Background:
The record gives the reactivity of an RNA of 177 nucleotides to DMS and 2A3. For 2A3, 3,284 sequencing reads were counted. For 2A3 the reverse transcriptase was SuperScript II with manganese. In probing experiments dimethyl sulfate is read out at A N1 and C N3, which are open when not base-paired. The RNA was probed in 150 mM KOAc, 10 mM MgCl2 and 150 mM bicine (pH 8.5) at 24 C. It was measured as part of the RMDB library RFM100. For DMS, 3,683 sequencing reads were counted.
RNA sequence: GGGAACGACUCGAGUAGAGUCGAAAACGAAUAGAGCAGUCCUUCUAAGGUUAUCCAAAGAUACCCCCGUAGUGAACUUUCCCUUUAUCGCUUUAAAUCUGUAGUCCAGACCCCUACGCCGCAAGGCGUUUUCCUGGCGGUUCGCCGCCAGGAAAACAAAAGAAACAACAACAACAAC
Reactivity to DMS in 0.01 (KOAc 150mM, MgCl2 10mM, bicine 150mM(pH8.5), 24C), signal-to-noise 3, nucleotides 027 to 126: c010g020a120a100u030a110g020a100g010c040a110g010u000c030c030u000u010c040u030a100a100g030g000u000u000a060u020c050c030a050a100a130g000a050u000a090c060c060c010c000c030g040u010a030g020u020g020a110a070c050u000u010u010c010c000c000u020u020u030a060u010c090g000c040u030u000u000a060a070a100u000c040u000g010u010a020g010u030c050c030a050g010a100c080c030c020c020u010a040c020g000c010c010g040c300a090a140g000g020c040
Reactivity to 2A3 in 0.01 (KOAc 150mM, MgCl2 10mM, bicine 150mM(pH8.5), 24C), signal-to-noise 4, nucleotides 027 to 126: c020g030a040a040u140a100g050a020g020c040a010g020u030c020c010u040u060c050u060a050a060g040g010u060u070a020u040c030c040a130a040a000g030a030u080a050c030c000c000c000c020g040u070a030g030u020g080a040a030c030u020u030u030c010c000c000u020u090u040a140u040c030g020c020u080u070u140a040a100a050u070c020u040g070u070a030g050u050c020c000a010g020a060c010c000c000c020u030a040c030g020c010c010g020c050a050a030g020g020c000